[RMDB]
An RNA of 177 nucleotides, treated with 2A3 and DMS and read out base by base. Values cover nucleotides 27 to 126. For 2A3 the reverse transcriptase was SuperScript II with manganese. Values are in units of 0.01, from 0 to 300, in steps of 10. Conditions: 150 mM KOAc, 10 mM MgCl2 and 150 mM bicine (pH 8.5), 24 C.

RNA sequence: GGGAACGACUCGAGUAGAGUCGAAAAUGUCGAAUCCCGAUCCUGGAGGCGCAAGAGAUCUGUCUGUUGGCCAAAGUCAACUGACCAAGCUGAAGACAGAGGAUGGCAGAGCCAUUUCGUCGGGGCAAGUCCUCGUAAAUUUCGAUUUACGAGGACUAAAAGAAACAACAACAACAAC
Reactivity to 2A3 in 0.01 (KOAc 150mM, MgCl2 10mM, bicine 150mM(pH8.5), 24C), signal-to-noise 3, nucleotides 027 to 126: u240g040u050c030g050a050a060u030c000c010c010g000a040u070c000c030u010g090g010a070g050g000c030g000c070a090a010g040a020g000a180u010c020u010g030u000c000u010g300u090u080g070g000c020c010a040a000a000g000u010c030a140a240c250u300g000a000c000c000a020a020g000c010u050g010a010a000g000a000c000a000g000a010g010g010a020u040g030g000c050a040g040a030g130c000c000a000u050u100u070c040g000u000c000g000g000g010g020c040a050
Reactivity to DMS in 0.01 (KOAc 150mM, MgCl2 10mM, bicine 150mM(pH8.5), 24C), signal-to-noise 4, nucleotides 027 to 126: u010g000u000c110g010a130a110u000c000c000c020g010a060u000c070c040u030g010g000a080g000g030c110g020c070a080a110g020a300g000a090u000c020u000g000u000c000u010g010u010u010g010g010c000c020a000a060a240g000u000c030a190a140c270u010g020a030c010c020a140a160g000c000u010g000a040a030g000a020c000a000g000a030g010g000a110u020g000g000c060a160g010a170g000c020c010a070u000u000u000c080g010u000c010g020g000g010g020c270a060